[RMDB]
RNA sequence: GGGAACGACUCGAGUAGAGUCGAAAAGAUAUGGAUCCCAGUACAUCGCUGAUGACCUCGGAAACGAGCAAGGCGUUGUACGGGAUCCUAAGUCAAACCUCUGGCCGAGUUCGCUCGGCCAGAGGAAGAUGUACAACCACUUCGGUGGUUGUACAUCAAAAGAAACAACAACAACAAC
Reactivity to DMS in 0.01 (KOAc 150mM, MgCl2 10mM, bicine 150mM(pH8.5), 24C), signal-to-noise 1, nucleotides 027 to 126: g000a060u020a300u030g010g000a000u000c000c000c000a130g070u000a020c000a000u000c000g020c000u030g010a100u000g000a100c300c000u000c000g000g010a100a090a230c000g010a040g010c010a030a150g010g000c000g010u000u000g000u000a010c000g000g000g000a000u000c000c000u010a000a090g000u000c020a100a130a160c000c000u000c000u000g000g000c000c000g010a000g020u000u030c160g030c000u000c000g000g000c000c000a000g000a000g000g000a000a010
Reactivity to 2A3 in 0.01 (KOAc 150mM, MgCl2 10mM, bicine 150mM(pH8.5), 24C), signal-to-noise 1, nucleotides 027 to 126: g020a040u030a040u180g020g020a000u010c040c010c010a000g000u000a000c000a010u040c020g020c000u070g040a300u140g080a250c040c000u010c000g030g070a090a050a070c010g020a040g030c010a090a130g000g000c000g000u000u000g010u000a000c000g000g010g000a000u000c000c010u020a110a000g000u000c000a080a090a150c010c000u000c000u020g020g000c020c030g020a010g060u150u240c300g160c160u030c010g000g100c000c000a010g000a010g000g000a000a010